[RMDB]
RNA sequence: GGGAACGACUCGAGUAGAGUCGAAAACUGACGCCGGCUACCGGUUCGUUGCUGGGUGCCUGACGAUCGCAGGACGGGUGGUGACGACGGCGGAAGAACUGGAGCUGAACGGCAUCACCGACGUGACCGCUGAGCUCGUGUUCGCACGAGCUCAGCGAAAAGAAACAACAACAACAAC
Reactivity to 2A3 in 0.01 (KOAc 150mM, MgCl2 10mM, bicine 150mM(pH8.5), 24C), signal-to-noise 1, nucleotides 027 to 126: c030u040g000a040c090g010c070c070g040g000c040u100a100c000c000g020g000u130u080c000g030u000u170g000c000u040g100g010g120u110g060c000c030u090g060a170c080g140a110u110c050g020c000a030g000g150a020c020g030g000g000u000g010g030u010g060a000c140g000a000c000g040g000c090g090g010a040a050g050a110a030c110u100g060g100a040g000c000u050g040a100a000c000g120g000c000a000u000c000a030c020c000g070a070c050g020u030g020a010c000
Description:
This 177-nucleotide RNA was probed chemically with 2A3. For 2A3, 467 sequencing reads were counted. The data come from the RNA Mapping Database (RMDB), library OK1LIB. The RNA was probed in 150 mM KOAc, 10 mM MgCl2 and 150 mM bicine (pH 8.5) at 24 C. High 2A3 reactivity points to a flexible backbone, as in loops and unpaired stretches.